Chemical mapping of a 177-nucleotide RNA with DMS and 2A3. The DMS profile rests on 2,449 reads. Reactivities are rounded to 0.1 and cut off at 0 and 3.

RNA sequence: GGGAACGACUCGAGUAGAGUCGAAAACCGCCCGCGCAGGAUCCCUGCGGGCACCCUCCGUCCUCCGGCGAUGUAUCCCGUGACUGGGCGAGCAGACACGGCGCGCGGGCCGAUUUUCCGCCCCGGACAUCUGACACUGUUUCGACAGUGUCAGAUGAAAAGAAACAACAACAACAAC
Reactivity to DMS in 0.01 (KOAc 150mM, MgCl2 10mM, bicine 150mM(pH8.5), 24C), signal-to-noise 2, nucleotides 027 to 126: c070c160g000c010c000c010g070c010g040c080a030g030g010a140u020c020c060c000u020g030c130g000g000g010c030a090c040c030c050u010c050c040g000u010c010c030u010c000c040g000g030c070g000a010u000g010u030a100u040c130c000c000g030u020g000a090c130u020g010g000g000c100g000a090g020c000a050g020a090c090a000c010g000g010c100g000c020g020c000g000g000g010c000c060g020a120u010u040u010u000c050c020g000c020c040c010c050g020g030a280
Reactivity to 2A3 in 0.01 (KOAc 150mM, MgCl2 10mM, bicine 150mM(pH8.5), 24C), signal-to-noise 3, nucleotides 027 to 126: c010c010g010c020c000c000g030c010g010c020a040g010g160a130u070c020c000c010u040g020c000g000g020g010c000a050c010c000c010u050c010c020g050u030c000c030u020c000c020g030g000c060g020a010u070g070u070a160u080c010c000c010g020u050g040a070c050u050g010g030g060c030g010a060g050c020a010g020a030c020a000c100g020g000c000g020c010g000c000g030g000g020c010c010g010a020u080u010u060u000c000c010g020c010c000c000c000g020g020a010